[RMDB]
Chemical mapping of a 177-nucleotide RNA with DMS and 2A3.
2A3 adducts were read by reverse transcription with SuperScript II with manganese.
It was measured as part of the RMDB library OK2TST.

RNA sequence: GGGAACGACUCGAGUAGAGUCGAAAACGAUGGGGUUUGUCUGCUUAAGCCAACCGCUUUGGGAUAGAAGGGAAGUAACCCCACGGGCCACAUUCAAAUGCCUACCUGAUUCCUCAAAGCUAGGUGCUCUACAAGCUCAGUUCGCUGAGCUUGUAGAAAAAGAAACAACAACAACAAC
Reactivity to DMS in 0.01 (KOAc 150mM, MgCl2 10mM, bicine 150mM(pH8.5), 24C), signal-to-noise 2, nucleotides 027 to 126: c060g000a090u000g010g020g010g010u010u000u020g000u000c080u000g060c070u010u020a050a160g010c000c050a030a060c100c130g010c050u000u000u010g000g020g010a060u010a050g010a140a090g000g000g020a060a110g010u000a020a070c040c000c000c030a060c070g000g000g000c020c100a030c140a090u020u000c130a080a100a100u020g000c020c010u010a180c100c010u000g000a190u010u000c040c010u020c070a030a010a030g020c070u000a090g010g010u000g010c130
Reactivity to 2A3 in 0.01 (KOAc 150mM, MgCl2 10mM, bicine 150mM(pH8.5), 24C), signal-to-noise 1, nucleotides 027 to 126: c040g160a180u040g000g000g000g000u060u100u070g080u040c030u090g060c070u160u120a020a070g000c020c000a100a030c060c040g010c060u000u020u010g060g000g020a030u050a170g180a110a030g060g000g020a030a060g050u090a040a060c000c000c090c010a000c000g000g000g000c030c040a030c030a060u080u070c020a050a110a060u210g010c030c000u000a010c030c010u060g050a080u090u090c000c000u080c000a030a020a040g000c000u020a060g060g040u070g010c000